This 207-nucleotide RNA was probed chemically with 2A3 and DMS. The DMS profile rests on 2,248 reads. The data come from the RNA Mapping Database (RMDB), library M2RFPK.
[RMDB]
RNA sequence: GGGAACGACUCGAGUAGAGUCGAAAAAGCAUACCAGCUCGUACGCGAGCUGGUAUGCAAAAAUUGGUGUAGCCUUACCGUAGUAGGCACAAAAACGUAAGCUGGAUCUACGGAUCCAGCUGACGAAAAAAGUGUUUUGUGUUCGCACAAAACACAAGCAAAAUAUUACGUUCGCGUAAUAUUUUGCAAAAGAAACAACAACAACAAC
Reactivity to 2A3 in 0.01 (KOAc 150mM, MgCl2 10mM, bicine 150mM(pH8.5), 24C), signal-to-noise 2, nucleotides 027 to 156: a000g000c000a000u000a000c000c000a050g050c010u000c010g040u050a080c300g000c020g110a000g000c000u000g000g010u000a000u000g000c010a000a010a000a000a010u090u160g000g010u030g130u190a030g000c010c010u000u020a010c030c070g020u010a000g020u000a000g000g000c020a020c030a060a040a030a020a000c000g000u010a010a010g000c000u000g000g000a000u000c010u030a030c170g070g000a000u000c000c000a000g000c000u000g000a000c010g030a180a030a000a010a010a050g000u000g000u000u020u000u000g010u000g020u030u070c170g070c070a000c000a000a000a000a000c000a000c000a010a010
Reactivity to DMS in 0.01 (KOAc 150mM, MgCl2 10mM, bicine 150mM(pH8.5), 24C), signal-to-noise 1, nucleotides 027 to 156: a200g000c010a020u000a000c000c000a050g020c020u010c030g020u020a150c300g070c040g020a010g010c000u010g000g000u000a000u000g000c000a010a010a020a050a100u010u010g010g000u010g010u000a080g020c000c010u000u010a060c090c070g050u010a100g010u000a040g040g030c000a120c130a020a080a060a090a130c000g040u000a010a000g000c000u000g010g020a020u000c000u000a150c300g110g000a020u000c000c000a010g010c000u010g000a010c000g020a000a010a070a060a080a130g000u000g010u000u000u000u000g050u000g000u000u010c300g000c040a040c000a020a000a010a010c000a000c010a020a120